[RMDB]
RNA sequence: GGGAACGACUCGAGUAGAGUCGAAAAUGCUUUUAUGGUCUUUAUGUCUGUUUCUUACUUUGCUCAACUCUUUAACUUUUGUUAAGAAAUGAUCAUCUGCCAGCUCAAUUUCAAAGAAAGGUCCGACCUAAUCACAGCAUUUCGAUGCUGUGAUUAGAAAAGAAACAACAACAACAAC
Reactivity to DMS in 0.01 (KOAc 150mM, MgCl2 10mM, bicine 150mM(pH8.5), 24C), signal-to-noise 3, nucleotides 027 to 126: u020g000c060u050u010u010u030a080u000g010g020u010c030u010u010u000a050u030g010u000c080u000g000u000u010u000c010u000u000a080c100u000u010u000g010c070u000c040a110a130c150u000c020u000u010u020a050a050c070u010u000u010u010g030u000u010a040a100g020a040a040a100u030g010a050u000c040a010u000c040u000g010c020c010a030g010c050u000c050a050a060u020u010u000c100a040a100a110g020a060a080a090g020g000u010c020c020g000a160c170
Reactivity to 2A3 in 0.01 (KOAc 150mM, MgCl2 10mM, bicine 150mM(pH8.5), 24C), signal-to-noise 7, nucleotides 027 to 126: u070g010c020u030u090u100u130a100u220g040g030u030c020u030u150u060a130u100g040u010c080u020g030u010u030u000c000u010u020a090c020u060u060u090g030c020u020c030a010a070c040u010c010u080u130u130a050a050c030u050u050u120u300g030u030u020a040a010g020a040a100a040u130g020a030u030c010a020u000c020u030g020c010c000a010g020c010u020c030a060a160u050u090u090c100a150a120a020g090a040a110a010g050g010u000c010c010g020a020c000
Structure probing data (DMS and 2A3) for a 177-nucleotide construct.
2A3 adducts were read by reverse transcription with SuperScript II with manganese.
For DMS the reverse transcriptase was MarathonRT.
Reactivities are given for positions 27 through 126.